The data come from the RNA Mapping Database (RMDB), library TTRDES. The record gives the reactivity of an RNA of 177 nucleotides to 2A3 and DMS. DMS adducts were read by reverse transcription with MarathonRT. The 2A3 profile rests on 8,435 reads. The DMS profile rests on 5,104 reads.
[RMDB]
RNA sequence: GGGAACGACUCGAGUAGAGUCGAAAAGAUAUGGACCAUUUAGCUUUUGACGCAGUCCCAUCGGAAACGAUGGGUCUGCGAUAAGCUAAUGGUCCUAAGUCAAAAGCUUGAGCUUCGGCUCAAGCAACUAUACAUUUGGCUUCGGCCAAAUGUAUAGAAAAGAAACAACAACAACAAC
Reactivity to 2A3 in 0.01 (KOAc 150mM, MgCl2 10mM, bicine 150mM(pH8.5), 24C), signal-to-noise 3, nucleotides 027 to 126: g010a000u000a010u070g000g010a000c000c010a040u150u160u260a010g000c030u180u140u190u300g300a300c090g000c000a010g000u000c000c000c000a000u010c000g010g010a010a010a000c000g000a000u010g010g020g010u020c000u010g010c000g010a000u020a010a010g010c000u000a000a000u010g010g010u000c010c000u010a000a000g000u000c010a000a000a130a170g000c000u010u010g010a000g000c010u080u110c300g130g000c010u000c010a010a000g000c010a000a000
Reactivity to DMS in 0.01 (KOAc 150mM, MgCl2 10mM, bicine 150mM(pH8.5), 24C), signal-to-noise 3, nucleotides 027 to 126: g000a020u000a060u000g000g000a010c000c000a000u000u010u020a000g020c000u000u010u020u020g030a250c110g030c000a010g000u000c000c000c000a010u000c000g020g000a010a020a040c010g020a010u000g000g000g010u000c000u000g020c010g020a010u010a010a020g010c000u000a010a010u000g010g000u000c000c000u000a000a060g000u000c020a160a090a160a150g010c000u000u000g010a010g000c000u000u020c270g040g010c000u000c000a000a010g000c000a020a060